[RMDB]
RNA sequence: GGGAACGACUCGAGUAGAGUCGAAAAAAUUGCCACGUUUCACAUCAGGUCUGAGGUAAUUAAUCCAUCGCAGACGACAACUCUUGCCACACCUCAACAAUCCUUCAUUGCAUGCAUAGAUAGAAUCAGAACCAGAAGACUAGAAAAGCUAAAGAAAGUACCUCCUAAUGUUCGCAUUAGGAGGUACAAAAGAAACAACAACAACAAC
Reactivity to 2A3 in 0.01 (KOAc 150mM, MgCl2 10mM, bicine 150mM(pH8.5), 24C), signal-to-noise 2, nucleotides 027 to 156: a020a000u120u150g000c050c010a110c040g070u020u030u050c080a100c050a100u050c030a060g070g080u080c020u040g060a040g000g050u020a070a020u070u140a080a050u110c040c020a080u110c030g000c010a030g040a080c090g010a050c050a020a000c050u000c030u120u040g030c000c000a050c020a000c080c000u060c030a080a050c050a040a100u040c010c000u100u100c020a090u010u270g050c020a040u030g000c000a030u020a080g080a030u070a020g090a030a010u070c060a030g030a050a010c020c030a020g030a120a000g000a060c030u040a030g130a140a070a040a000g030c070u080a030a130a080g090a030a150a000
Reactivity to DMS in 0.01 (KOAc 150mM, MgCl2 10mM, bicine 150mM(pH8.5), 24C), signal-to-noise 2, nucleotides 027 to 156: a070a070u000u000g010c020c030a180c170g000u000u000u010c070a090c000a120u000c060a200g000g040u000c000u010g050a170g000g020u040a120a090u010u000a120a150u010c090c040a050u000c070g030c040a070g010a150c020g020a150c070a070a100c040u000c000u000u020g010c010c040a050c050a060c040c010u000c050a070a050c050a070a050u000c010c050u000u000c050a060u000u010g000c030a100u000g000c010a090u010a010g020a120u000a070g000a020a120u000c060a090g010a110a070c000c010a120g030a100a070g000a120c000u000a140g000a060a060a010a140g060c040u010a040a070a160g000a120a030a230
Conditions: 150 mM KOAc, 10 mM MgCl2 and 150 mM bicine (pH 8.5), 24 C. Chemical mapping of a 207-nucleotide RNA with 2A3 and DMS. For 2A3 the reverse transcriptase was SuperScript II with manganese. Reactivities are given for positions 27 through 156. 2A3 is a SHAPE reagent: it acylates the 2'-hydroxyl of flexible nucleotides of all four kinds. DMS adducts were read by reverse transcription with MarathonRT.